[RMDB]
The record gives the reactivity of an RNA of 177 nucleotides to DMS and 2A3. It was measured as part of the RMDB libraries RFM100 and RFMREP. Reactivities are given for positions 27 through 126. DMS adducts were read by reverse transcription with MarathonRT. Values are in units of 0.01, from 0 to 300, in steps of 10.

RNA sequence: GGGAACGACUCGAGUAGAGUCGAAAAGGUAUGGCUCAUAUCCACUGCGACAUAGAGACGGCGUCUCUACCUACCACAUGUCGCAGUGGUCCUAUCCGCGAGGAUAGGAGGUGGUACCCGAAAGGGUGUUUACACGCAAAUUCGUUUGCGUGUAAACAAAAGAAACAACAACAACAAC
Reactivity to DMS in 0.01 (KOAc 150mM, MgCl2 10mM, bicine 150mM(pH8.5), 24C), signal-to-noise 5, nucleotides 027 to 126: g010g010u000a030u000g010g020c050u020c100a130u020a070u030c010c000a000c010u010g010c000g010a010c000a060u000a020g020a030g010a030c010g010g030c240g010u000c010u000c010u000a050c110c080u020a210c060c060a080c180a050u000g010u000c010g010c010a010g000u000g000g010u000c010c000u000a010u000c000c000g000c290g010a200g010g000a020u010a000g010g010a010g000g010u010g000g010u000a050c000c000c000g000a090a100a090g010g000g010u000
Reactivity to 2A3 in 0.01 (KOAc 150mM, MgCl2 10mM, bicine 150mM(pH8.5), 24C), signal-to-noise 7, nucleotides 027 to 126: g060g020u070a070u140g090g010c030u040c090a090u060a070u110c020c000a000c000u000g000c000g000a000c010a030u080a020g010a000g010a010c060g200g180c170g060u000c000u010c010u020a080c010c030u090a100c010c060a070c010a100u040g000u010c000g000c000a000g000u000g000g000u000c000c000u000a000u000c000c000g030c050g040a040g000g000a000u000a000g000g000a010g020g010u060g030g020u050a050c000c010c010g060a080a040a040g040g010g000u030